[RMDB]
RNA sequence: GGGAACGACUCGAGUAGAGUCGAAAAGCGCAUGGCCAAUUAGGCCCCAAACAUUGCGUCGAUAUCGUGCGCCAUCGCAAUGUCGUUUUCCGUGAUACCGCCUACCGCAUGCGUAACCAGCGCGAAAGGACAGUUCCUGUUUCGACAGGAACUGUCCAAAAGAAACAACAACAACAAC
Reactivity to DMS in 0.01 (KOAc 150mM, MgCl2 10mM, bicine 150mM(pH8.5), 24C), signal-to-noise 1, nucleotides 027 to 126: g000c030g040c030a040u020g000g010c020c060a270a080u020u030a110g090g040c010c000c020c010a110a150a050c020a050u010u030g010c020g000u010c170g000a120u000a040u010c070g060u000g000c020g020c020c070a050u000c020g010c000a020a000u000g000u000c100g000u000u000u000u000c010c050g030u000g010a200u050a110c080c100g030c000c020u000a060c080c080g000c020a070u200g000c020g010u010a130a180c060c060a040g000c040g000c050g000a080a110a080
Reactivity to 2A3 in 0.01 (KOAc 150mM, MgCl2 10mM, bicine 150mM(pH8.5), 24C), signal-to-noise 2, nucleotides 027 to 126: g030c000g020c050a010u070g000g000c010c000a060a150u180u060a190g000g000c000c000c010c010a030a260a030c020a040u060u040g010c010g030u020c000g040a040u070a030u100c120g030u030g020c000g050c030c000a060u060c060g000c040a040a070u040g050u000c040g000u000u040u100u040c030c010g100u110g060a010u050a100c030c010g000c020c010u040a050c040c000g030c020a030u090g050c020g000u010a010a070c040c020a020g000c010g010c040g090a080a030a030
Chemical mapping of a 177-nucleotide RNA with DMS and 2A3. The DMS profile rests on 799 reads. The 2A3 profile rests on 1,559 reads. Reactivities are given for positions 27 through 126.